The record gives the reactivity of an RNA of 177 nucleotides to DMS and 2A3. 2A3 adducts were read by reverse transcription with SuperScript II with manganese. Values cover nucleotides 27 to 126. It was measured as part of the RMDB library OK2TRN. For DMS the reverse transcriptase was MarathonRT.
RNA sequence: GGGAACGACUCGAGUAGAGUCGAAAAGUCUAGCGAAUGGAUCCCACCCGGGAAACACGCAAGUCGCGAAUUAGGCCGACCGGCCAAGGUCAAUAGCAGAACUCAACUGCAUGAGUAAGCUAGACGAACUACUAUAUCGGUUCGCCGAUAUAGUAGUAAAAGAAACAACAACAACAAC
Reactivity to DMS in 0.01 (KOAc 150mM, MgCl2 10mM, bicine 150mM(pH8.5), 24C), signal-to-noise 9, nucleotides 027 to 126: g010u000c010u000a020g000c010g020a160a110u000g000g020a140u000c010c010c010a200c300c040c110g000g000g000a090a110a100c050a100c040g000c050a100a110g010u000c140g010c040g000a080a090u010u010a100g000g020c020c040g010a190c120c100g010g020c040c020a090a090g010g000u000c010a080a100u000a100g000c030a030g000a060a090c110u010c130a070a110c030u010g010c060a100u010g000a080g010u010a090a170g000c000u000a010g000a020c020g000a110
Reactivity to 2A3 in 0.01 (KOAc 150mM, MgCl2 10mM, bicine 150mM(pH8.5), 24C), signal-to-noise 8, nucleotides 027 to 126: g000u000c000u010a000g000c010g070a110a100u110g090g010a030u010c000c000c010a030c020c020c000g020g010g020a060a090a020c070a020c060g020c050a070a050g210u150c050g010c020g050a080a150u150u060a160g060g000c030c030g050a130c040c060g040g000c000c030a020a010g030g010u040c030a040a090u050a140g010c010a010g040a160a070c040u050c170a060a130c040u050g020c030a040u040g010a010g130u040a040a010g000c000u000a000g000a010c010g000a010